[RMDB]
RNA sequence: GGGAACGACUCGAGUAGAGUCGAAAAGAAAGAAAGAAAGAAGGGUCCCUUGCCACACGCCCAUUCUCGGCAGGUGUGGAAGGCCCCUCGCAUGACUGGUCCUGACACUGUCGUCACGCCAGCCCAAUUUUUAAGAAGUCUUCGGACUUCUUAAAAAAAAAGAAACAACAACAACAAC
Reactivity to 2A3 in 0.01 (KOAc 150mM, MgCl2 10mM, bicine 150mM(pH8.5), 24C), signal-to-noise 7, nucleotides 027 to 126: g070a000a080a000g100a020a100a000g090a030a130a020g100a020a030g020g000g000u120c050c010c010u010u040g290c000c000a000c000a000c010g030c010c020c020a220u300u070c150u060c070g000g000c040a120g010g200u000g000u010g000g010a000a000g010g000c000c000c000c000u010c010g050c040a070u150g050a070c010u010g000g020u070c030c020u010g020a010c010a020c100u280g090u300c050g010u020c020a000c020g010c000c000a030g000c010c010c000a040a050
Reactivity to DMS in 0.01 (KOAc 150mM, MgCl2 10mM, bicine 150mM(pH8.5), 24C), signal-to-noise 8, nucleotides 027 to 126: g010a100a090a070g010a120a120a100g010a110a120a160g000a090a030g000g010g000u000c210c020c010u000u000g020c000c000a010c000a000c010g010c010c000c170a150u030u030c180u040c280g000g020c010a120g020g020u010g000u000g000g000a020a020g000g010c300c000c000c000u000c030g000c160a050u020g010a160c010u000g000g000u010c050c150u000g000a040c020a080c230u020g020u040c160g000u000c010a010c300g010c000c010a010g000c010c020c100a060a030